[RMDB]
RNA sequence: GGGAACGACUCGAGUAGAGUCGAAAAGACGCCUGUGUGGCGAACCGAGCAAUGGCAUAAGCCGCAAUAGAAGAUGAGAUGGAAGCGGCAAGAUAGAAUGCUCGCAACUAGAUCCAUCUCACAGAGACGUACUCGUCCAGUUCGCUGGACGAGUACGAAAAGAAACAACAACAACAAC
Reactivity to 2A3 in 0.01 (KOAc 150mM, MgCl2 10mM, bicine 150mM(pH8.5), 24C), signal-to-noise 2, nucleotides 027 to 126: g200a000c030g030c000c010u300g170u180g040u260g120g000c000g000a090a000c000c000g000a030g010c030a120a020u220g000g010c060a090u070a190a100g000c010c010g000c040a000a100u090a110g150a130a010g160a260u000g000a000g000a000u000g000g090a060a000g000c000g000g000c000a000a000g030a000u270a170g080a140a110u020g010c090u150c030g000c050a120a050c040u160a010g000a150u030c000c010a000u000c000u000c010a030c010a000g050a000g000a000
Reactivity to DMS in 0.01 (KOAc 150mM, MgCl2 10mM, bicine 150mM(pH8.5), 24C), signal-to-noise 2, nucleotides 027 to 126: g000a250c120g000c000c000u050g000u070g000u020g070g010c000g020a140a020c040c230g000a030g010c090a230a090u120g000g010c050a180u020a010a190g060c000c030g020c160a030a160u090a120g000a120a140g000a180u000g000a000g020a000u000g000g000a000a200g000c040g010g000c000a000a160g000a210u000a080g020a020a070u030g000c050u050c030g000c080a210a040c170u050a160g000a300u000c030c000a000u000c000u000c000a000c040a130g040a250g000a100